[RMDB]
This 177-nucleotide RNA was probed chemically with 2A3 and DMS. For DMS, 941 sequencing reads were counted. Conditions: 150 mM KOAc, 10 mM MgCl2 and 150 mM bicine (pH 8.5), 24 C. For 2A3 the reverse transcriptase was SuperScript II with manganese.

RNA sequence: GGGAACGACUCGAGUAGAGUCGAAAACACGACACUGGAGAACAAAUGCCUCGAAAGCUGGAAGUGGCAGGCGCGGUACGACCACGUGUUGCACGUCCUACUACUACCAAGGGCGUCAGCAUUACGAAGUAUCCGGCCAGUUCGCUGGCCGGAUACUAAAAGAAACAACAACAACAAC
Reactivity to 2A3 in 0.01 (KOAc 150mM, MgCl2 10mM, bicine 150mM(pH8.5), 24C), signal-to-noise 2, nucleotides 027 to 126: c040a010c030g100a020c010a000c010u060g050g000a060g030a050a030c010a100a130a000u170g040c020c000u000c000g110a160a170a050g090c050u080g060g060a100a050g030u090g040g000c040a010g020g010c100g000c000g120g020u050a040c040g020a040c010c000a110c040g000u000g000u040u000g020c140a000c000g000u020c060c010u020a090c040u010a070c000u070a080c090c150a120a100g010g010g000c000g000u000c020a030g000c000a010u000u100a050c090g040a020
Reactivity to DMS in 0.01 (KOAc 150mM, MgCl2 10mM, bicine 150mM(pH8.5), 24C), signal-to-noise 1, nucleotides 027 to 126: c070a070c000g000a040c110a050c100u000g010g010a080g030a160a090c160a080a030a160u020g010c000c150u000c000g000a070a040a300g000c060u000g000g000a030a050g020u000g040g030c140a050g060g000c030g070c150g000g000u000a080c020g000a230c000c060a120c140g040u000g000u000u000g000c130a080c000g000u000c000c060u010a060c070u010a290c080u000a110c100c100a000a040g000g020g000c000g010u000c010a000g000c010a030u000u030a150c300g020a060